RNA sequence: GGGAACGACUCGAGUAGAGUCGAAAAUACUACGCGGCCUCCCACCUCUCUGCCCGGACCCGGCCGCCCGCCCAGAGACCCGGCCGGCUCCCACCGUCGCUUGGUCGACGACCCGCCGCGCCAACAACUAACUGUGUGUAUUCGUACACACAGUUAGAAAAGAAACAACAACAACAAC
Reactivity to 2A3 in 0.01 (KOAc 150mM, MgCl2 10mM, bicine 150mM(pH8.5), 24C), signal-to-noise 1, nucleotides 027 to 126: u080a000c070u040a040c070g030c030g030g050c000c020u030c000c000c000a010c000c030u060c000u030c040u070g040c000c000c000g060g020a050c060c000c000g010g010c030c020g080c020c000c020g010c020c000c000a080g030a030g020a160c000c000c010g000g000c030c000g010g050c000u090c010c010c010a050c040c030g040u000c000g000c060u090u240g180g030u170c020g000a020c020g010a000c000c000c020g030c020c000g000c060g000c020c020a060a080c030a040a000
Reactivity to DMS in 0.01 (KOAc 150mM, MgCl2 10mM, bicine 150mM(pH8.5), 24C), signal-to-noise 3, nucleotides 027 to 126: u000a090c090u000a090c080g020c060g030g000c020c060u000c020c030c030a160c070c040u000c040u000c040u000g000c030c030c050g010g000a080c100c050c030g000g000c020c020g020c030c050c020g000c020c020c020a160g010a150g000a090c070c080c070g010g020c000c030g020g010c050u010c000c010c030a140c160c010g010u000c030g000c010u010u000g030g010u020c020g000a030c010g000a070c080c080c080g020c020c000g010c080g000c030c030a100a060c110a080a160
This 177-nucleotide RNA was probed chemically with 2A3 and DMS. The data come from the RNA Mapping Database (RMDB), library M2PK90. DMS adducts were read by reverse transcription with MarathonRT. For 2A3 the reverse transcriptase was SuperScript II with manganese. The reactions ran in a buffer of 150 mM KOAc, 10 mM MgCl2 and 150 mM bicine (pH 8.5), at 24 C. The 2A3 profile rests on 1,752 reads.